[RMDB]
RNA sequence: GGGAACGACUCGAGUAGAGUCGAAAAUGACGACAAAUGGGUGAUCUCUUUCUACUAUGUGAACAGUGAACAUAUUAGUAGCAGAAAGGGGAGCAGGCACUGUGGUCUGUACCUGGCCACUGACAUCGGUUCAAAAGUGAUUCGUCACUUUUGAACCAAAAGAAACAACAACAACAAC
Reactivity to 2A3 in 0.01 (KOAc 150mM, MgCl2 10mM, bicine 150mM(pH8.5), 24C), signal-to-noise 6, nucleotides 027 to 126: u100g030a000c050g020a000c040a010a150a080u170g060g020g010u070g100a120u020c000u000c000u000u030u030c000u000a010c010u000a010u030g050u020g030a150a050c070a170g120u090g260a100a010c010a070u070a050u060u150a040g010u030a000g020c110a040g120a050a090a020g020g010g000g000a020g040c020a020g040g050c020a010c080u050g010u040g050g030u000c020u030g050u040a040c020c010u010g000g020c020c000a030c000u020g010a000c020a130u150c120
Reactivity to DMS in 0.01 (KOAc 150mM, MgCl2 10mM, bicine 150mM(pH8.5), 24C), signal-to-noise 4, nucleotides 027 to 126: u010g000a110c060g000a080c050a030a070a110u020g000g000g000u010g000a070u010c050u000c010u000u000u020c000u010a060c020u010a020u020g020u020g000a110a110c180a090g000u020g020a100a130c050a010u000a040u030u010a090g020u020a020g020c300a030g000a070a050a040g040g000g000g000a110g020c050a050g010g010c040a050c130u010g010u010g000g010u000c000u010g020u010a060c060c040u000g000g000c030c020a020c010u020g000a140c180a050u010c040